[RMDB]
RNA sequence: GGGAACGACUCGAGUAGAGUCGAAAAAUGUCACUUGUAUUAGUCAUUGUAGUGAAGAGAUUGUACAACCCAUCACUUUCUAACUUUGCGUUAGCAUUGUGCAGUGGUGUAAUGUGGUUGUACACUUAUGCUCCCUGGUUCGCCAGGGAGAAAAGAAACAACAACAACAAC
Reactivity to DMS in 0.01 (KOAc 150mM, MgCl2 10mM, bicine 150mM(pH8.5), 24C), signal-to-noise 6, nucleotides 027 to 129: a060u000g010u020c020a060c000u010u020g000u020a060u030u010a050g040u020c080a120u010u060g020u000a000g020u020g000a060a080g020a070g010a040u070u000g030u010a010c010a000a000c050c000c000a030u020c000a050c020u020u050u050c040u040a170a060c030u030u000u010g020c030g040u040u010a090g030c020a000u000u000g000u030g000c230a030g000u010g070g000u010g000u010a050a020u030g030u080g000g000u040u010g000u000a010c010a020c060u000u010a020u040g000
Reactivity to 2A3 in 0.01 (KOAc 150mM, MgCl2 10mM, bicine 150mM(pH8.5), 24C), signal-to-noise 9, nucleotides 027 to 129: a000u140g040u060c030a010c020u060u100g080u120a120u130u160a140g070u060c080a050u000u100g060u100a070g020u020g030a040a020g030a030g040a080u100u060g010u020a000c000a010a010c010c000c000a000u020c000a000c000u090u280u170c020u030a030a020c000u010u000u010g010c010g150u140u140a060g000c010a000u000u000g010u030g060c090a040g020u000g050g000u000g020u040a040a080u070g110u210g030g000u000u000g000u000a000c000a000c000u020u030a030u210g030